[RMDB]
RNA sequence: GGGAACGACUCGAGUAGAGUCGAAAAAGAAUCGCACGUUGGUGCGCAAGGCCGUCAGCUACCUGGACGCUAUUCAGCAACCGGUCAUCGACCAGCGCGUCGAGUUGGACGACCUGCUCCACAAGACCUACACAAUGCCGUUCGCGGCAUUGUGUAGAAAAGAAACAACAACAACAAC
Reactivity to DMS in 0.01 (KOAc 150mM, MgCl2 10mM, bicine 150mM(pH8.5), 24C), signal-to-noise 2, nucleotides 027 to 126: a100g010a120a060u000c030g000c030a010c040g010u040u050g030g000u010g000c040g020c220a060a000g010g000c000c000g000u000c020a060g010c010u000a010c110c040u060g050g050a010c300g030c000u020a010u030u050c160a060g010c000a070a300c030c020g000g010u010c110a110u020c190g000a060c000c000a080g030c300g000c050g000u000c000g000a090g010u030u000g030g030a010c020g000a010c050c000u010g000c040u000c000c060a020c100a090a080g010a070c130
Reactivity to 2A3 in 0.01 (KOAc 150mM, MgCl2 10mM, bicine 150mM(pH8.5), 24C), signal-to-noise 4, nucleotides 027 to 126: a000g140a010a020u080c020g000c010a020c080g160u210u210g100g000u090g040c040g000c050a040a030g030g000c000c000g020u020c010a020g000c040u030a050c010c030u130g060g020a020c090g010c050u090a180u150u230c140a000g000c010a040a110c060c000g040g000u020c050a130u060c020g020a020c010c020a100g160c030g030c060g130u050c000g000a010g010u020u100g100g020a040c000g000a000c000c010u050g010c020u020c040c010a040c040a050a040g040a060c000
Source information
Source: RMDB library OK1LIB, as collected in RNAgym. This 177-nucleotide RNA was probed chemically with DMS and 2A3.